[RMDB]
RNA sequence: GGGAACGACUCGAGUAGAGUCGAAAAAGGUGAAAAGUACCCUGAAUAAGGGAGUGAAAUAGUACCUGAAACCUAGCGCUUACAAGCGGUCGGAGCCUACGGGUGACGGCGUGCCUUUUGCAUAAUGUUUUCUUCGAAGUUUCGACUUCGAAGAAAAAAAAGAAACAACAACAACAAC
Reactivity to DMS in 0.01 (KOAc 150mM, MgCl2 10mM, bicine 150mM(pH8.5), 24C), signal-to-noise 5, nucleotides 027 to 126: a010g000g020u000g010a090a110a100a180g000u050a090c000c000c010u000g000a170a080u050a140a040g000g030g010a150g010u020g000a100a060a050u030a090g000u010a020c010c010u010g010a090a100a180c030c000u000a080g010c100g020c030u010u040a070c160a070a070g010c010g010g010u010c000g000g000a300g000c000c000u000a060c100g020g000g020u000g020a280c030g010g000c000g000u010g010c050c040u000u000u040u010g000c070a070u010a090a080u010g010
Reactivity to 2A3 in 0.01 (KOAc 150mM, MgCl2 10mM, bicine 150mM(pH8.5), 24C), signal-to-noise 1, nucleotides 027 to 126: a000g020g010u030g010a030a030a030a020g060u210a240c020c010c000u000g000a050a020u260a140a040g010g000g030a060g020u110g000a000a000a060u150a030g060u030a000c000c000u050g010a000a030a000c010c030u000a110g040c000g000c090u090u130a100c030a100a000g010c000g000g010u010c000g000g000a010g000c000c040u060a060c220g090g000g000u020g000a000c000g020g000c010g020u080g000c000c000u100u090u130u070g000c050a090u020a110a130u300g130